Structure probing data (2A3 and DMS) for a 177-nucleotide construct.
High 2A3 reactivity points to a flexible backbone, as in loops and unpaired stretches.
The reactions ran in a buffer of 150 mM KOAc, 10 mM MgCl2 and 150 mM bicine (pH 8.5), at 24 C.
2A3 adducts were read by reverse transcription with SuperScript II with manganese.

RNA sequence: GGGAACGACUCGAGUAGAGUCGAAAAACGCAUCUCUGGAUCCAUAUAAUAGGAUCCGCCGAUCGGACAGGUGGCCGACUGCGUCGACCUCGUUAUAAGACGGGAUCCUUCGUUGGGAUCCGGAUCCGCUACGGGAGUAUUUCGAUACUCCCGUAGCAAAAGAAACAACAACAACAAC
Reactivity to 2A3 in 0.01 (KOAc 150mM, MgCl2 10mM, bicine 150mM(pH8.5), 24C), signal-to-noise 1, nucleotides 027 to 126: a000c120g070c070a050u000c000u010c020u070g010g000a000u000c000c050a030u130a030u030a210a170u100a050g000g010a000u000c000c010g000c000c000g030a210u020c000g050g000a010c000a000g000g050u030g030g070c050c010g100a220c230u190g030c160g040u010c010g140a090c000c000u020c020g000u060u000a220u000a210a060g000a030c010g000g020g020a000u010c000c000u070u080c150g130u180u120g170g000g000a000u000c000c000g000g000a020u050c060c070
Reactivity to DMS in 0.01 (KOAc 150mM, MgCl2 10mM, bicine 150mM(pH8.5), 24C), signal-to-noise 2, nucleotides 027 to 126: a080c090g020c200a070u020c150u000c040u000g010g000a020u000c000c000a120u000a110u000a110a120u000a050g020g000a000u000c000c000g000c130c040g020a090u000c110g020g010a130c270a040g010g000u000g020g020c010c020g000a060c080u010g010c300g000u000c010g010a020c010c000u020c040g010u010u000a070u010a170a140g010a040c030g000g030g000a020u000c000c010u000u010c270g010u000u010g010g000g010a020u000c010c020g000g000a020u000c140c110